[RMDB]
About this RNA: An RNA of 177 nucleotides, treated with 2A3 and DMS and read out base by base. For 2A3 the reverse transcriptase was SuperScript II with manganese. It was measured as part of the RMDB library OK2TRN. The 2A3 profile rests on 2,466 reads. The DMS profile rests on 3,227 reads.
RNA sequence: GGGAACGACUCGAGUAGAGUCGAAAAACUCUGGUUCUGUGUGUACCCUUGAGGAGCACUGGUACUUUAAAAUUACCAAUUGAACCAAAGGUACUAUUGAAAUUUGGAGCAGAGGAGUGGACCUCUCAUGCUAUCACUGAUUCGUCAGUGAUAGCAUAAAAGAAACAACAACAACAAC
Reactivity to 2A3 in 0.01 (KOAc 150mM, MgCl2 10mM, bicine 150mM(pH8.5), 24C), signal-to-noise 3, nucleotides 027 to 126: a010c020u000c000u000g090g040u040u000c010u010g070u010g020u010g010u090a060c020c010c000u030u070g040a130g080g030a060g020c020a010c040u000g010g000u030a010c000u070u150u140a100a150a070a070u040u010a000c000c000a020a100u050u060g020a010a020c000c000a020a010a000g020g020u030a020c030u040a070u140u160g140a110a150a150u220u200u170g070g030a050g010c060a020g050a040g060g040a030g050u050g050g050a070c000c000u010c000u020c020
Reactivity to DMS in 0.01 (KOAc 150mM, MgCl2 10mM, bicine 150mM(pH8.5), 24C), signal-to-noise 3, nucleotides 027 to 126: a050c010u000c010u000g000g000u010u000c010u020g030u000g010u010g020u010a030c000c010c050u000u000g000a110g020g020a300g010c150a010c060u000g010g000u010a010c150u000u000u030a080a050a100a090u010u000a000c010c000a000a070u020u010g010a140a120c050c000a010a020a020g000g010u000a050c030u010a130u010u000g010a070a060a160u000u000u000g020g010a070g010c060a030g000a080g000g020a090g010u010g000g000a150c090c030u000c060u010c120